Background
This 177-nucleotide RNA was probed chemically with DMS and 2A3. Reactivities are rounded to 0.1 and cut off at 0 and 3. The reactions ran in a buffer of 150 mM KOAc, 10 mM MgCl2 and 150 mM bicine (pH 8.5), at 24 C.
[RMDB]
RNA sequence: GGGAACGACUCGAGUAGAGUCGAAAAACGCUACUUACGAGUAGCGAGGCAGCUUUGAAUGAUGUUACUUCUUAUUACUUAAAGAAGACAUCAGAUAAAUCUGUGCUAGUAUCGGUACGCCGAUACAUGGCGAACUUCAGUUCGCUGAAGUUCGCCAAAAAGAAACAACAACAACAAC
Reactivity to DMS in 0.01 (KOAc 150mM, MgCl2 10mM, bicine 150mM(pH8.5), 24C), signal-to-noise 2, nucleotides 027 to 126: a150c000g030c020u000a000c000u000u040a110c170g090a100g040u000a000g000c020g000a010g010g110c000a000g000c180u000u000u010g020a120a190u000g000a000u010g000u000u050a100c030u000u000c000u000u000a110u070u050a130c290u040u020a060a040a000g000a080a000g040a130c000a000u000c000a000g000a280u050a000a030a000u010c020u000g000u000g000c040u010a080g000u000a000u000c000g030g030u020a100c300g050c010c000g000a020u000a010c000a170
Reactivity to 2A3 in 0.01 (KOAc 150mM, MgCl2 10mM, bicine 150mM(pH8.5), 24C), signal-to-noise 5, nucleotides 027 to 126: a000c010g000c000u000a000c000u080u060a090c300g070a020g000u000a000g000c000g000a020g040g000c000a000g000c030u050u050u060g090a220a030u020g000a020u020g010u080u100a180c050u010u000c000u040u060a200u110u100a290c080u090u210a130a010a010g000a000a000g020a040c000a000u000c000a000g000a020u210a000a010a000u010c010u000g010u030g180c040u050a020g010u000a000u000c000g000g020u010a020c290g050c020c000g000a000u000a010c000a030
Annotation:
The data come from the RNA Mapping Database (RMDB), libraries RFM100 and RFMREP.